[RMDB]
RNA sequence: GGGAACGACUCGAGUAGAGUCGAAAAAUUAUGCUGACCCUCACUGGCACCACUACUGUAGUGUUCCAGUCCAAGCAGCAGUGGCCACUUGUCUGGCUACAUGCCCCCCUACCCCACACUAGCCAGUGCCCCUGGGGGCAGCUACUUGCCUCAGCUGGAUCUAACCAAUUUUCGAAUUGGUUAGAUCAAAAGAAACAACAACAACAAC
Reactivity to DMS in 0.01 (KOAc 150mM, MgCl2 10mM, bicine 150mM(pH8.5), 24C), signal-to-noise 2, nucleotides 027 to 156: a110u020u000a060u010g020c000u010g010a150c020c010c040u000c070a070c020u000g010g060c020a060c000c070a090c050u000a090c090u000g000u000a040g040u010g010u000u000c030c080a060g020u010c090c030a040a130g000c030a040g030c040a090g030u000g020g000c010c010a050c020u000u010g020u010c040u010g040g010c000u000a020c030a100u010g000c020c020c000c020c010c020u000a150c050c010c000c100a190c040a030c040u000a050g010c050c110a090g010u000g000c000c000c000c030u010g000g020g080g040g060c010a000g010c020u000a060c060u000u010g010c010c020u000c050a130g030c140u010g000
Reactivity to 2A3 in 0.01 (KOAc 150mM, MgCl2 10mM, bicine 150mM(pH8.5), 24C), signal-to-noise 3, nucleotides 027 to 156: a000u130u100a070u170g000c020u070g220a300c000c010c000u010c020a030c010u030g010g000c010a010c050c020a060c080u180a020c030u140g070u170a060g040u010g040u170u040c090c020a020g040u060c050c030a100a070g030c100a020g000c020a000g030u000g010g010c010c010a020c060u210u260g070u190c070u050g020g000c000u000a010c020a140u160g000c000c010c000c010c000c000u020a090c010c010c000c000a030c010a000c000u030a010g080c050c040a020g010u010g010c020c000c000c030u010g000g000g000g000g000c010a000g000c000u030a030c040u060u100g070c010c030u070c030a020g060c050u070g070
Overview:
Chemical mapping of a 207-nucleotide RNA with DMS and 2A3. The 2A3 profile rests on 1,544 reads. For DMS, 3,588 sequencing reads were counted. For 2A3 the reverse transcriptase was SuperScript II with manganese. Source: RMDB library OK3TST, as collected in RNAgym.